RNA sequence: GGGAACGACUCGAGUAGAGUCGAAAAGAUAUGGAGUCCAUCACAGCGAUGAGUAUGAGGUCGGAAACGACCUAUACGAGCUGUAUGGACUCCUAAGUCAAAGGAUCAAAACUUCGGUUUUGAUCCAGAUCAUUGAUCGCUUCGGCGAUCAAUGAUCAAAAGAAACAACAACAACAAC
Reactivity to 2A3 in 0.01 (KOAc 150mM, MgCl2 10mM, bicine 150mM(pH8.5), 24C), signal-to-noise 1, nucleotides 027 to 126: g020a010u010a000u110g000g000a010g020u010c020c000a050u140c160a010c000a030g000c020g270a300u280g000a170g060u000a010u110g300a040g070g020u000c000g010g000a020a020a030c000g010a000c020c030u000a010u010a010c000g020a040g000c010u000g000u000a000u000g000g000a000c000u000c000c000u010a000a000g000u000c010a080a140a210g010g010a010u030c000a000a000a000a000c020u070u160c300g130g040u020u030u020u020g000a000u000c000c000a000
Reactivity to DMS in 0.01 (KOAc 150mM, MgCl2 10mM, bicine 150mM(pH8.5), 24C), signal-to-noise 1, nucleotides 027 to 126: g000a010u010a220u000g000g000a010g010u000c010c000a040u000c240a020c020a000g030c010g030a210u000g000a140g000u000a000u010g020a000g030g000u000c020g020g010a020a030a100c020g010a010c000c010u000a010u000a000c000g000a050g000c000u010g030u000a000u010g000g010a000c000u000c010c000u050a000a050g000u000c040a130a190a120g000g000a010u000c000a000a010a010a010c000u000u020c280g040g030u000u000u010u000g010a000u000c000c000a040